[RMDB]
RNA sequence: GGGAACGACUCGAGUAGAGUCGAAAAGUGGUAAAAGAUUACAACAGUACGAAGUGGAAAAGGUUCACGUUCAGUAAUGCUUGGUUUGUUCCAGCUGCGUAUACAGAAUGUUAAUACCUUUGAACCAACUGUACCACCUCAUGUUGAGCAUAUUACCAAUCUUACUAAAUUUCGAUUUAGUAAGAUUAAAAGAAACAACAACAACAAC
Reactivity to 2A3 in 0.01 (KOAc 150mM, MgCl2 10mM, bicine 150mM(pH8.5), 24C), signal-to-noise 9, nucleotides 027 to 156: g030u020g010g010u020a050a050a040a030g100a070u130u150a090c020a090a010c010a030g010u060a020c060g060a190a020g010u040g020g020a030a030a030a010g020g000u020u040c050a010c020g000u000u010c010a030g010u030a040a030u080g020c040u080u070g040g100u170u120u220g200u300u080c010c000a040g030c210u090g000c020g030u060a050u010a260c020a020g020a020a010u010g010u040u080a080a040u090a190c010c000u030u020u050g020a020a020c000c000a020a040c020u040g010u010a030c010c000a020c020c000u060c020a050u080g020u030u030g020a040g020c050a050u090a080u160u050a030c020c000
Reactivity to DMS in 0.01 (KOAc 150mM, MgCl2 10mM, bicine 150mM(pH8.5), 24C), signal-to-noise 7, nucleotides 027 to 156: g020u000g020g020u000a040a050a060a130g010a200u000u000a140c040a060a080c020a060g020u000a080c070g030a070a070g040u010g010g010a070a050a100a090g010g030u000u000c120a070c040g020u000u010c030a160g030u000a050a060u000g010c020u010u000g040g010u000u000u000g010u000u000c010c010a070g010c060u000g000c050g070u000a110u000a100c020a100g010a050a050u010g020u000u000a050a120u000a040c040c030u000u000u000g010a070a090c030c030a050a110c100u000g000u000a130c020c010a030c020c030u000c040a100u010g010u000u000g000a160g020c090a100u000a100u000u000a050c050c040
Background
An RNA of 207 nucleotides, treated with 2A3 and DMS and read out base by base. The 2A3 profile rests on 11,626 reads. The reactions ran in a buffer of 150 mM KOAc, 10 mM MgCl2 and 150 mM bicine (pH 8.5), at 24 C. It was measured as part of the RMDB library OK3TST. DMS adducts were read by reverse transcription with MarathonRT.